[RMDB]
RNA sequence: GGGAACGACUCGAGUAGAGUCGAAAAUAUGCGAUAUAUAUAGCGAUACGCAUAAUAUAUCGCGCGAUAGCGUAUGCGUAUGCGUAUGCGUAUGCGUAUAUAUAUGCGCGCUAUUAUAUACGCGCGCAGUAUUGCCUCUCUUCGGAGAGGCAAUACUAAAAGAAACAACAACAACAAC
Reactivity to DMS in 0.01 (KOAc 150mM, MgCl2 10mM, bicine 150mM(pH8.5), 24C), signal-to-noise 3, nucleotides 027 to 126: u010a040u000g010c000g010a130u000a010u000a000u000a030u010a060g000c010g010a250u020a230c070g030c000a020u010a060a040u000a010u000a010u000c080g030c000g010c070g010a080u000a090g010c010g020u000a010u000g020c040g040u000a040u010g030c060g000u010a030u000g020c000g010u000a020u000g020c000g030u000a020u000a010u000a020u010a040u010g000c000g010c000g010c000u000a040u020u010a050u000a060u000a060c110g010c000g020c090g010c100
Reactivity to 2A3 in 0.01 (KOAc 150mM, MgCl2 10mM, bicine 150mM(pH8.5), 24C), signal-to-noise 2, nucleotides 027 to 126: u260a080u130g010c000g070a000u010a000u000a000u000a010u060a040g000c020g080a110u070a270c040g000c020a000u000a110a010u020a000u000a010u020c070g000c000g000c010g070a090u110a080g070c020g000u020a010u050g010c020g040u120a070u270g130c050g030u060a030u050g030c010g020u010a020u070g020c000g040u000a000u000a010u010a000u020a010u060g000c000g000c000g010c020u030a050u250u090a070u040a010u010a030c080g000c000g000c010g000c020